[RMDB]
RNA sequence: GGGAACGACUCGAGUAGAGUCGAAAAAGGCUAAUAAGUGUGUGGGAAAGUCUCAGAGGAAGGUAUCCUGGGGGCUUUUGCUCCCACAGGUGCCAUUGUUGCUGAGAUGCAUGGGGCCUGUCGUGCAGACCUUAGAAUUCUUCGGAAUUCUAAGGUCAAAAGAAACAACAACAACAAC
Reactivity to DMS in 0.01 (KOAc 150mM, MgCl2 10mM, bicine 150mM(pH8.5), 24C), signal-to-noise 3, nucleotides 027 to 126: a050g010g010c040u000a090a090u020a070a150g010u000g010u000g020u010g020g020g000a090a070a110g000u000c000u000c010a050g010a090g000g020a060a050g000g010u000a010u000c000c080u000g010g010g020g000g010c020u010u010u010u020g010c020u000c010c000c010a020c200a040g000g020u000g010c000c000a070u000u000g000u000u020g010c010u010g010a030g000a040u000g000c090a060u000g000g000g000g020c020c020u000g000u000c080g020u000g010c140a180
Reactivity to 2A3 in 0.01 (KOAc 150mM, MgCl2 10mM, bicine 150mM(pH8.5), 24C), signal-to-noise 1, nucleotides 027 to 126: a000g010g000c020u070a100a080u150a300a110g010u070g040u030g000u140g170g020g040a060a070a110g030u000c010u020c020a040g010a000g060g050a040a040g000g000u020a020u130c000c000u010g020g030g000g000g010c000u250u140u160u300g000c050u110c000c000c000a040c000a020g050g000u020g030c020c000a030u000u110g120u030u070g060c000u000g000a000g000a000u040g000c000a040u060g000g000g060g000c000c040u060g030u070c020g010u060g050c030a050

About this RNA
An RNA of 177 nucleotides, treated with DMS and 2A3 and read out base by base. Values are in units of 0.01, from 0 to 300, in steps of 10. The DMS profile rests on 3,715 reads. The RNA was probed in 150 mM KOAc, 10 mM MgCl2 and 150 mM bicine (pH 8.5) at 24 C. DMS adducts were read by reverse transcription with MarathonRT. It was measured as part of the RMDB library OK2TST. 2A3 adducts were read by reverse transcription with SuperScript II with manganese.